This 207-nucleotide RNA was probed chemically with 2A3 and DMS.
RNA sequence: GGGAACGACUCGAGUAGAGUCGAAAAUGUUACACGGCCUCGAAUCUUGGGAUGGCAAAUUUCGGCUUGGUACAGAGGAACGAUCAUGGUGAGGAAUCCAACCCUGGUUUCUCCAUUAGCAAGGUUGCCCGCGUUUCAGGAGAUUCAACUUACCCAAUCCUCGUCUAAAAUUCGUUUUAGACGAGGAAAAAGAAACAACAACAACAAC
Reactivity to 2A3 in 0.01 (KOAc 150mM, MgCl2 10mM, bicine 150mM(pH8.5), 24C), signal-to-noise 2, nucleotides 027 to 156: u060g000u030u080a030c040a000c090g060g000c040c010u050c060g060a090a050u050c050u070u090g020g000g030a040u060g040g000c090a080a070a100u100u100u060c040g000g020c000u010u100g010g020u080a050c050a060g090a060g030g020a100a020c030g040a040u100c010a000u090g010g000u080g010a050g000g020a000a030u060c050c000a050a040c040c000c040u010g030g020u020u030u000c010u030c010c030a060u090u080a000g030c010a020a040g030g010u040u050g050c020c020c010g080c020g020u070u070u050c040a020g070g000a020g020a040u130u130c040a030a030c020u080u090a050c020c000c000a000a010
Reactivity to DMS in 0.01 (KOAc 150mM, MgCl2 10mM, bicine 150mM(pH8.5), 24C), signal-to-noise 2, nucleotides 027 to 156: u010g020u020u000a080c020a040c060g000g010c040c000u000c120g020a070a080u000c040u010u000g020g020g010a060u010g010g020c070a040a080a130u000u000u010c070g050g020c000u000u020g020g040u010a060c050a110g020a070g010g010a040a080c090g000a040u010c030a080u000g020g020u000g010a090g010g020a010a070u000c030c050a040a130c060c030c020u000g020g010u000u000u000c030u000c020c010a100u000u000a080g040c060a080a120g000g000u000u000g030c010c020c030g010c060g040u000u000u000c070a080g010g010a070g020a080u000u000c010a050a120c030u000u010a150c010c000c020a080a300
Values are in units of 0.01, from 0 to 300, in steps of 10. For DMS, 4,477 sequencing reads were counted. Conditions: 150 mM KOAc, 10 mM MgCl2 and 150 mM bicine (pH 8.5), 24 C. It was measured as part of the RMDB library OK3TST. DMS adducts were read by reverse transcription with MarathonRT. Values cover nucleotides 27 to 156.